[RMDB]
RNA sequence: GGGAACGACUCGAGUAGAGUCGAAAACACUUCGUGAUGCUCUGCUUUCUAUUACUAAAGACGAAGAGGCCGUAGAUAUGGCUAUAUUCUGUCAUAAUCAUGAUGUGGAUUACACUGGUGAUGGUUUUACUAAUGUGAUACCGUCAUAUGGUAUAGAACAUUAACUCCAGUUCGCUGGAGUUAAUGUAAAAGAAACAACAACAACAAC
Reactivity to DMS in 0.01 (KOAc 150mM, MgCl2 10mM, bicine 150mM(pH8.5), 24C), signal-to-noise 3, nucleotides 027 to 156: c030a060c040u000u000c050g030u010g020a130u000g000c060u000c050u000g020c070u010u000u010c050u000a130u000u000a150c050u010a070a120a240g000a090c030g010a050a050g000a300g010g000c010c040g080u000a100g030a170u010a040u000g010g010c000u000a050u000a170u000u000c040u010g030u020c010a070u000a160a080u010c050a030u000g010a030u000g030u000g010g000a120u000u000a020c050a030c040u010g020g040u000g000a040u010g020g020u010u000u010u010a050c030u010a040a080u010g020u010g020a010u000a020c020c010g000u010c020a040u000a060u000g010g010u010a050u000a100g010a080
Reactivity to 2A3 in 0.01 (KOAc 150mM, MgCl2 10mM, bicine 150mM(pH8.5), 24C), signal-to-noise 6, nucleotides 027 to 156: c030a010c010u030u030c030g020u010g030a020u030g010c050u020c030u110g070c060u090u160u070c060u090a170u170u100a130c060u160a080a110a050g010a020c030g020a030a010g020a050g060g000c010c010g060u090a080g080a180u160a060u170g010g000c000u010a020u020a040u300u040c100u120g010u010c010a060u100a130a020u030c040a010u030g030a010u020g040u070g010g000a020u040u130a040c070a010c050u070g040g010u010g030a020u020g020g070u000u020u060u070a030c050u100a110a110u240g010u020g020a000u010a050c000c000g020u010c000a020u050a070u110g050g000u040a090u030a090g070a040

Source information:
This 207-nucleotide RNA was probed chemically with DMS and 2A3. Source: RMDB library OK3TST, as collected in RNAgym. The RNA was probed in 150 mM KOAc, 10 mM MgCl2 and 150 mM bicine (pH 8.5) at 24 C. For DMS, 5,857 sequencing reads were counted. For DMS the reverse transcriptase was MarathonRT. High DMS reactivity at an A or C suggests that its Watson-Crick edge is free.